Chemical mapping of a 207-nucleotide RNA with 2A3. The 2A3 profile rests on 938 reads. Conditions: 150 mM KOAc, 10 mM MgCl2 and 150 mM bicine (pH 8.5), 24 C. For 2A3 the reverse transcriptase was SuperScript II with manganese. It was measured as part of the RMDB library ARCHII.
[RMDB]
RNA sequence: GGGAACGACUCGAGUAGAGUCGAAAAGUUGAGUCCACGGCAACAUUCUCGGCCUAAUUAGUGGAUUAGCUGCUGGCAUUUAUGUUCGGAAUAAAAGCAGUGAAACAAGAAUCGAACUAGCUCUCGAUUUGGAAGUUAGCAACCUAAUCUUGAGCGACCAUUCACAUCGGUUCGCCGAUGUGAAUGGAAAAGAAACAACAACAACAAC
Reactivity to 2A3 in 0.01 (KOAc 150mM, MgCl2 10mM, bicine 150mM(pH8.5), 24C), signal-to-noise 2, nucleotides 027 to 156: g000u000u000g000a010g000u000c000c000a000c030g000g010c000a020a000c010a050u080u000c020u030c000g190g040c080c150u230a270a180u200u120a080g000u010g000g040a020u030u300a020g000c000u000g030c000u000g060g000c060a060u000u030u000a060u140g000u000u020c000g010g010a020a020u010a010a050a010a000g000c000a000g000u010g040a000a020a000c050a080a050g190a120a030u070c010g000a000a010c020u000a070g000c000u000c010u000c010g000a020u000u020u000g040g020a100a080g090u280u300a050g160c030a100a050c000c000u020a000a010u000c000u000u070g000a020g020c000g010a000